An RNA of 177 nucleotides, treated with DMS and 2A3 and read out base by base. The data come from the RNA Mapping Database (RMDB), library OK1LIB. For DMS, 1,186 sequencing reads were counted. The RNA was probed in 150 mM KOAc, 10 mM MgCl2 and 150 mM bicine (pH 8.5) at 24 C. 2A3 adducts were read by reverse transcription with SuperScript II with manganese.
RNA sequence: GGGAACGACUCGAGUAGAGUCGAAAAGGCGAUCAGUUCGCGGUAAUCCACCAGGACCGAACGAACCUCGCGAUGUCGGGCCAAGACGUCGAGUGGAUGCUGGUAGGAAUCCAACGAUUGCUCGGCCAGGAGCAUAGCUCUUCGGAGCUAUGCUCCUAAAAGAAACAACAACAACAAC
Reactivity to DMS in 0.01 (KOAc 150mM, MgCl2 10mM, bicine 150mM(pH8.5), 24C), signal-to-noise 1, nucleotides 027 to 126: g000g030c000g010a030u000c300a050g000u000u000c000g000c110g000g020u000a240a020u040c080c020a170c230c100a110g010g000a050c080c030g010a070a050c080g030a020a020c000c120u000c000g060c000g000a010u050g030u040c060g010g020g000c030c110a060a060g000a050c070g000u010c000g000a140g000u000g000g020a050u000g000c030u020g000g010u060a170g000g000a150a030u000c000c000a060a190c080g000a000u000u000g010c000u000c100g000g000c000c140
Reactivity to 2A3 in 0.01 (KOAc 150mM, MgCl2 10mM, bicine 150mM(pH8.5), 24C), signal-to-noise 2, nucleotides 027 to 126: g080g000c000g000a020u050c060a030g070u020u020c030g000c060g060g000u130a150a130u020c020c010a030c010c030a070g040g000a040c030c060g040a120a100c030g000a020a000c020c000u000c000g000c000g000a030u100g030u050c050g020g050g000c080c000a000a080g030a020c010g010u000c000g000a120g020u010g010g000a010u050g000c010u050g050g000u010a120g020g030a000a020u040c010c000a020a020c010g000a000u020u160g000c030u040c040g040g050c000c000